[RMDB]
This 177-nucleotide RNA was probed chemically with DMS and 2A3. It was measured as part of the RMDB library M2PK50. For DMS the reverse transcriptase was MarathonRT. For 2A3 the reverse transcriptase was SuperScript II with manganese. The RNA was probed in 150 mM KOAc, 10 mM MgCl2 and 150 mM bicine (pH 8.5) at 24 C.
RNA sequence: GGGAACGACUCGAGUAGAGUCGAAAAGUGCGCUAUUUCGAUAGCGCACAAAGGCGGCGAGUCUCGCUCGGCGGCGCGCGACAGCGCGCAGCGCAGCCGGUACAUAACGCCACUUCGGUGGCGUUAAUAUUCAGUUGUGAUUCGUCACAACUGAAUAAAAAGAAACAACAACAACAAC
Reactivity to DMS in 0.01 (KOAc 150mM, MgCl2 10mM, bicine 150mM(pH8.5), 24C), signal-to-noise 5, nucleotides 027 to 126: g010u000g010c010g000c000u000a000u000u000u020c160g010a020u000a010g000c010g030c000a000c000a010a060a090g000g010c000g000g020c010g000a010g000u000c010u000c010g010c010u010c040g000g010c000g000g040c010g010c000g020c000g010a170c300a180g010c020g040c000g040c000a010g000c010g010c010a020g000c010c010g020g010u010a090c170a150u010a010a000c000g010c000c000a010c000u000u010c180g020g000u000g000g000c000g010u000u000a010a070
Reactivity to 2A3 in 0.01 (KOAc 150mM, MgCl2 10mM, bicine 150mM(pH8.5), 24C), signal-to-noise 2, nucleotides 027 to 126: g000u000g000c000g030c010u010a020u010u090u050c050g080a010u010a010g000c000g010c000a000c010a000a000a000g010g010c020g030g000c010g010a010g010u000c010u030c020g020c020u130c070g010g000c010g000g010c000g000c000g000c000g120a110c090a130g030c030g040c020g010c030a010g000c020g000c000a000g030c000c030g020g030u100a060c050a060u100a020a000c000g030c000c010a010c020u040u060c190g070g000u000g010g000c000g000u000u000a000a000